Structure probing data (2A3) for a 207-nucleotide construct.
[RMDB]
RNA sequence: GGGAACGACUCGAGUAGAGUCGAAAAUACCUUUAGGUGCGGAUAGUCCUCUAUUGUCUAUUAGCUUUACAUUAUUAUGUUUAUCUUCAUAUUCUCUUAUUAUAUCUCUAGUACCAUCAUCAGACAUUCCAUCACAUAUUAAAAUCUCAUAUAAAUAGAUUUACUGCUAGUUCGCUAGCAGUAAAUCAAAAGAAACAACAACAACAAC
Reactivity to 2A3 in 0.01 (KOAc 150mM, MgCl2 10mM, bicine 150mM(pH8.5), 24C), signal-to-noise 2, nucleotides 027 to 156: u040a010c020c000u090u030u040a130g000g010u030g020c040g010g000a040u050a050g040u010c010c010u020c060u100a070u060u140g020u000c030u020a070u040u060a070g010c000u110u120u030a030c030a060u050u160a130u160u120a070u220g010u070u040u030a110u050c010u070u060c040a030u020a040u180u000c040u000c000u090u020a040u140u070a090u100a090u140c000u030c000u030a010g040u100a050c000c000a010u000c010a040u000c000a030g050a030c010a030u020u050c070c000a060u140c020a060c040a110u170a080u060u130a090a090a100a060u090c080u160c070a030u300a100u300a150a120a270u300a180
About this RNA: For 2A3 the reverse transcriptase was SuperScript II with manganese. The RNA was probed in 150 mM KOAc, 10 mM MgCl2 and 150 mM bicine (pH 8.5) at 24 C.